Conditions: 150 mM KOAc, 10 mM MgCl2 and 150 mM bicine (pH 8.5), 24 C.
Structure probing data (2A3 and DMS) for a 177-nucleotide construct.
For DMS the reverse transcriptase was MarathonRT.
The 2A3 profile rests on 2,795 reads.
RNA sequence: GGGAACGACUCGAGUAGAGUCGAAAAGAUAUGGAUCGUAGUAGACAUGUCGAUCACUCGGAAACGAGUGGCCGACAACAGCUACAGGCGAUCCUAAGUCAAAGCUGCGUUCUUCGGAACGCAGCAAGGUGAUUUUAUCGUUCGCGAUAAAAUCACCAAAAGAAACAACAACAACAAC
Reactivity to 2A3 in 0.01 (KOAc 150mM, MgCl2 10mM, bicine 150mM(pH8.5), 24C), signal-to-noise 1, nucleotides 027 to 126: g010a000u050a000u100g000g000a000u020c010g020u030a030g040u000a000g020a060c150a300u300g020u030c040g010a010u010c000a000c010u010c010g000g000a000a040a000c000g000a000g000u010g000g000c000c030g020a000c010a030a030c090a050g020c000u000a000c030a030g300g000c000g000a000u000c030c000u000a030a000g010u000c070a170a090a040g000c010u030g000c000g040u020u000c010u050u020c300g130g000a000a020c000g010c000a000g000c000a000a000
Reactivity to DMS in 0.01 (KOAc 150mM, MgCl2 10mM, bicine 150mM(pH8.5), 24C), signal-to-noise 2, nucleotides 027 to 126: g010a030u020a150u000g010g010a000u000c000g000u000a040g010u000a000g000a030c050a250u010g020u000c040g000a000u000c000a010c000u000c010g030g000a030a070a120c010g010a030g020u000g000g010c060c000g010a000c000a030a030c300a170g020c010u000a000c000a100g000g030c000g000a020u000c000c000u000a020a060g000u000c000a090a090a190g000c000u020g000c010g000u000u000c000u000u000c200g030g010a030a020c000g000c010a010g020c000a000a020